[RMDB]
RNA sequence: GGGAACGACUCGAGUAGAGUCGAAAAAGGUGUACAGAUUAAGGAUUUCCUCGCAACAUUGCUUGUAAGACUAAGCAUUGGCCAGGCACUGUGGCUCAUGCCUGUAAUCCCAACACUUUGGGAGGCUGAGGCGGGUGGAUCACCUGAAAUCAGGAAAAAAAUUAGCGUACUUCGGUACGCUAAUUUUAAAAGAAACAACAACAACAAC
Reactivity to DMS in 0.01 (KOAc 150mM, MgCl2 10mM, bicine 150mM(pH8.5), 24C), signal-to-noise 1, nucleotides 027 to 156: a030g010g010u000g010u000a180c140a190g010a050u010u000a080a090g000g030a120u010u000u000c010c010u000c110g000c020a120a100c080a050u010u000g010c050u000u000g010u000a050a270g020a110c130u000a030a110g030c070a090u010u000g010g010c030c030a000g010g000c000a050c030u000g010u010g010g000c020u000c130a100u000g000c000c010u000g040u030a080a160u010c000c000c000a070a070c160a080c120u010u010u000g000g030g050a060g060g000c050u010g020a040g030g030c040g020g020g010u000g010g000a110u000c030a080c000c010u000g010a010a110a060u020c020a010g070g000a000a020a050
Reactivity to 2A3 in 0.01 (KOAc 150mM, MgCl2 10mM, bicine 150mM(pH8.5), 24C), signal-to-noise 1, nucleotides 027 to 156: a000g090g000u060g000u050a170c090a080g060a110u250u150a080a020g140g000a080u110u060u060c000c000u020c030g000c000a000a120c030a090u110u170g000c000u030u030g060u210a100a200g030a020c050u010a000a010g020c010a070u090u090g030g030c000c010a000g000g030c000a000c090u090g000u060g050g000c000u020c100a030u140g000c000c000u100g020u060a000a070u000c000c000c000a030a010c090a040c050u130u160u000g000g020g020a030g000g000c040u030g010a000g100g040c060g000g000g000u090g000g050a020u090c040a070c050c000u000g060a020a100a000u130c000a010g060g280a050a010a000